[RMDB]
RNA sequence: GGGAACGACUCGAGUAGAGUCGAAAAAGCGGUGGCUGUCGUGAGGUACUGGGGAGUACUGCUGACCGGCGGGUAUCGAGUCUGGGCUACAGCCAAGGGAAUGGGCCUGGACGUUUCAGUGAAGGAGCAAUCGUCGAUUCUUCGGAAUCGACGAUUGAAAAGAAACAACAACAACAAC
Reactivity to DMS in 0.01 (KOAc 150mM, MgCl2 10mM, bicine 150mM(pH8.5), 24C), signal-to-noise 2, nucleotides 027 to 126: a090g000c030g010g000u010g000g010c030u030g000u000c030g000u000g000a040g010g010u000a020c000u010g030g020g010g000a090g020u000a000c020u010g010c060u030g030a080c300c030g020g000c000g020g000g000u010a000u000c030g000a140g000u000c000u000g000g010g020c010u000a040c000a040g000c040c040a180a300g020g020g000a050a060u060g000g000g000c000c000u000g000g000a000c020g010u000u000u010c030a130g000u030g020a090a070g030g000a090g020
Reactivity to 2A3 in 0.01 (KOAc 150mM, MgCl2 10mM, bicine 150mM(pH8.5), 24C), signal-to-noise 4, nucleotides 027 to 126: a000g110c040g030g020u070g010g110c020u020g030u040c020g010u070g070a080g020g000u010a020c020u080g050g100g040g030a010g020u030a020c020u030g090c080u030g040a040c010c000g000g010c000g010g000g090u050a050u150c020g000a020g030u000c010u020g000g010g050c000u060a190c100a020g020c010c030a090a080g110g000g000a040a230u100g000g010g000c000c000u010g020g010a010c010g000u020u060u050c040a050g010u030g140a140a070g050g010a050g050